[RMDB]
RNA sequence: GGGAACGACUCGAGUAGAGUCGAAAAGCUCUAGGAGACUAGAGCAAUACGUACGAGCGAUCGUGUCACUGAACUCCGAUAGCCAGUUCAGAGGCUGUCAAAGGACAUAGCUAUAGCUAUGUCCAAAGACCAUUCAUACGUUCGCGUAUGAAUGGUCAAAAGAAACAACAACAACAAC
Reactivity to 2A3 in 0.01 (KOAc 150mM, MgCl2 10mM, bicine 150mM(pH8.5), 24C), signal-to-noise 4, nucleotides 027 to 126: g010c000u000c000u000a000g000g000a060g030a070c000u010a000g000a000g010c000a000a010u080a020c040g050u030a030c060g020a040g090c040g020a050u030c030g030u030g070u100c010a020c090u040g030a050a010c020u030c020c010g040a040u040a010g000c030c010a010g030u050u060c030a040g030a040g090g000c010u010g000u040c030a060a020a070g020g000a000c000a000u000a000g000c010u080a030u060a300g000c000u000a000u010g000u000c000c000a000a000a000
Reactivity to DMS in 0.01 (KOAc 150mM, MgCl2 10mM, bicine 150mM(pH8.5), 24C), signal-to-noise 3, nucleotides 027 to 126: g020c000u000c000u000a000g030g000a170g000a230c000u010a000g040a010g030c000a020a040u000a140c130g010u000a030c020g000a020g000c200g000a060u000c010g000u010g030u020c030a110c030u000g000a060a000c000u020c130c030g010a140u030a050g030c090c190a050g020u060u010c150a050g010a090g000g000c040u000g010u020c050a060a110a110g000g000a030c000a000u000a000g000c010u040a140u070a120g010c000u000a000u000g000u010c000c000a010a000a050

About this RNA
Conditions: 150 mM KOAc, 10 mM MgCl2 and 150 mM bicine (pH 8.5), 24 C. Chemical mapping of a 177-nucleotide RNA with 2A3 and DMS. For DMS, 3,734 sequencing reads were counted. 2A3 adducts were read by reverse transcription with SuperScript II with manganese. Reactivities are given for positions 27 through 126. The data come from the RNA Mapping Database (RMDB), library OK1LIB. For DMS the reverse transcriptase was MarathonRT.